[RMDB]
The record gives the reactivity of an RNA of 177 nucleotides to DMS and 2A3. Source: RMDB library VIROID, as collected in RNAgym.
RNA sequence: GGGAACGACUCGAGUAGAGUCGAAAAGCUUGCCUGCUACCCAACACUCUAUGCUCGUGACACACUGCUAUCACACCAUACUUGCUUUAACUCUAUGCCCAUGACUUAAUUCGAUGAUACACAACUCCUCAUAUUAUUGCUUCGGCAAUAAUAUGAGAAAAGAAACAACAACAACAAC
Reactivity to DMS in 0.01 (KOAc 150mM, MgCl2 10mM, bicine 150mM(pH8.5), 24C), signal-to-noise 5, nucleotides 027 to 126: g020c050u000u000g020c040c040u010g020c040u000a140c020c020c020a080a130c130a060c080u000c030u000a050u000g000c030u010c080g010u010g000a100c070a070c080a060c050u000g010c040u010a060u000c040a070c050a090c030c030a050u000a060c060u000u000g000c040u000u000u000a050a070c070u010c030u010a060u010g000c000c020c010a100u010g010a040c070u000u000a060a110u000u000c040g000a050u010g000a150u000a050c050a070c100a090a070c110u000c080
Reactivity to 2A3 in 0.01 (KOAc 150mM, MgCl2 10mM, bicine 150mM(pH8.5), 24C), signal-to-noise 6, nucleotides 027 to 126: g010c030u070u070g080c000c040u030g040c020u060a100c010c010c000a020a000c050a020c030u050c010u050a070u150g020c020u020c070g100u070g060a020c010a010c000a020c080u050g010c010u050a020u130c020a020c010a020c060c010a030u060a130c040u020u050g060c000u100u090u050a050a030c010u040c020u050a050u090g040c000c020c020a050u100g040a060c030u090u130a050a030u170u060c040g040a060u060g030a020u120a100c080a010c010a080a160c040u030c030
For DMS, 4,744 sequencing reads were counted. The RNA was probed in 150 mM KOAc, 10 mM MgCl2 and 150 mM bicine (pH 8.5) at 24 C. In probing experiments dimethyl sulfate is read out at A N1 and C N3, which are open when not base-paired. 2A3 adducts were read by reverse transcription with SuperScript II with manganese. The 2A3 profile rests on 9,058 reads.